[RMDB]
RNA sequence: GGGAACGACUCGAGUAGAGUCGAAAAUACGAUCGACAUACCAUGCAUGCGAUCAUCAUGGUGUGUAGUACGCUCGAUCAGUACUACAUGAUCUCUAGGUACCUGUCCAUGUCGACACUAGGAUCCGGGCAAUGUACUCAUUCGUGAGUACAUUGCCAAAAGAAACAACAACAACAAC
Reactivity to DMS in 0.01 (KOAc 150mM, MgCl2 10mM, bicine 150mM(pH8.5), 24C), signal-to-noise 3, nucleotides 027 to 126: u000a070c150g000a070u000c010g000a020c020a040u000a040c000c010a010u000g010c300a030u000g010c300g020a160u030c050a040u000c020a000u000g010g010u010g020u000g000u000a030g010u000a050c020g030c100u000c170g000a090u010c050a120g010u000a020c030u000a030c100a050u000g000a000u000c030u010c040u000a020g000g000u000a080c150c130u000g020u020c090c110a090u000g010u000c020g020a050c060a040c040u000a020g010g000a050u000c040c250g020
Reactivity to 2A3 in 0.01 (KOAc 150mM, MgCl2 10mM, bicine 150mM(pH8.5), 24C), signal-to-noise 4, nucleotides 027 to 126: u140a040c090g040a040u030c020g030a020c000a010u020a000c010c000a000u010g080c060a010u030g040c120g300a230u300c040a010u020c000a010u020g000g000u020g000u020g000u040a010g020u010a010c030g000c110u120c090g150a270u120c080a030g010u000a010c010u010a010c020a070u120g020a040u010c120u000c030u130a030g050g020u090a150c010c010u020g040u010c030c020a070u100g030u070c040g010a010c020a010c070u030a020g040g020a030u000c030c030g030